RNA sequence: GGGAACGACUCGAGUAGAGUCGAAAAUGUGAUUGCGGCCGAGCUCGGCAUCACAGCAGAGGAAGCCAAACUAGUCUCGGAAAUCGCCUCGCAGGCUGGGGACGAAAGAACCGCUAGAGGGACUGGGAUAUCGAUCUGUGUUCGCACAGAUCGAUAUAAAAGAAACAACAACAACAAC
Reactivity to DMS in 0.01 (KOAc 150mM, MgCl2 10mM, bicine 150mM(pH8.5), 24C), signal-to-noise 2, nucleotides 027 to 126: u000g020u000g010a020u010u010g020c090g040g000c020c040g000a140g030c050u010c060g030g030c030a040u010c070a030c080a090g030c130a100g010a110g020g010a140a110g000c040c040a040a090a170c100u010a030g020u010c010u000c050g020g020a050a040a120u010c040g010c010c030u000c080g000c110a110g000g020c070u000g020g000g010g000a130c030g010a020a080a080g010a020a130c060c070g030c100u010a030g010a170g010g000g000a060c060u000g000g000g000
Reactivity to 2A3 in 0.01 (KOAc 150mM, MgCl2 10mM, bicine 150mM(pH8.5), 24C), signal-to-noise 1, nucleotides 027 to 126: u030g020u020g030a070u000u170g000c060g020g000c020c110g000a050g070c080u130c190g020g000c040a010u010c060a020c010a010g070c050a000g050a050g080g050a090a020g010c000c020a030a120a000c080u050a030g020u020c010u000c100g000g020a080a160a080u080c080g010c000c000u010c010g000c090a080g080g000c020u090g050g020g000g010a020c000g030a070a030a070g080a050a050c080c060g010c080u060a030g040a140g110g060g010a000c000u020g020g020g040
Chemical mapping of a 177-nucleotide RNA with DMS and 2A3. For DMS, 1,547 sequencing reads were counted. The data come from the RNA Mapping Database (RMDB), library OK2TRN. For DMS the reverse transcriptase was MarathonRT. Reactivities are rounded to 0.1 and cut off at 0 and 3. The RNA was probed in 150 mM KOAc, 10 mM MgCl2 and 150 mM bicine (pH 8.5) at 24 C.